[RMDB]
Structure probing data (2A3 and DMS) for a 207-nucleotide construct. The 2A3 profile rests on 1,516 reads.
RNA sequence: GGGAACGACUCGAGUAGAGUCGAAAAUCUUUAUGCCAAUACCACAUCAUUUGGUUACUACAGCUUUAUGAUAUGCUUGAAAUCAGGGAAUGUUAGCCUUCCAACUUCUUUUCCAAAUUGUUUUGGUUAUUGUAGGUUUAUAUAUUUCCAUAUGAAAAUCCCCAUUAUGAUUCGUCAUAAUGGGGAUAAAAGAAACAACAACAACAAC
Reactivity to 2A3 in 0.01 (KOAc 150mM, MgCl2 10mM, bicine 150mM(pH8.5), 24C), signal-to-noise 3, nucleotides 027 to 156: u020c010u010u240u110a100u160g040c000c010a010a030u030a060c000c010a040c020a060u080c010a030u030u030u070g010g010u000u080a050c030u040a030c040a010g010c010u070u050u080a050u120g080a050u080a040u260g030c040u060u050g050a050a060a040u090c080a090g020g000g030a000a050u060g050u040u090a030g020c010c030u050u020c050c020a030a040c040u040u030c010u030u080u030u030c020c000a030a040a140u120u090g060u010u030u020u050g010g000u070u050a050u020u110g020u060a040g000g000u040u160u010a090u000a010u000a010u080u070u050c010c050a020u150a030u300g080a010a130a290
Reactivity to DMS in 0.01 (KOAc 150mM, MgCl2 10mM, bicine 150mM(pH8.5), 24C), signal-to-noise 2, nucleotides 027 to 156: u000c050u000u010u000a090u020g010c040c050a090a100u000a130c060c010a050c020a030u000c030a040u000u000u000g000g010u000u000a080c090u000a140c120a130g010c000u000u000u000a030u010g010a060u000a020u010g010c030u000u000g010a070a050a060u000c060a190g040g030g010a050a040u010g020u000u000a060g010c030c050u000u000c130c040a010a060c020u000u010c030u000u000u000u000c000c000a050a110a080u010u000g010u000u000u000u010g020g030u010u000a080u000u000g010u000a090g010g020u000u000u000a090u000a130u000a110u050u000u000c010c010a110u000a130u010g000a090a050a070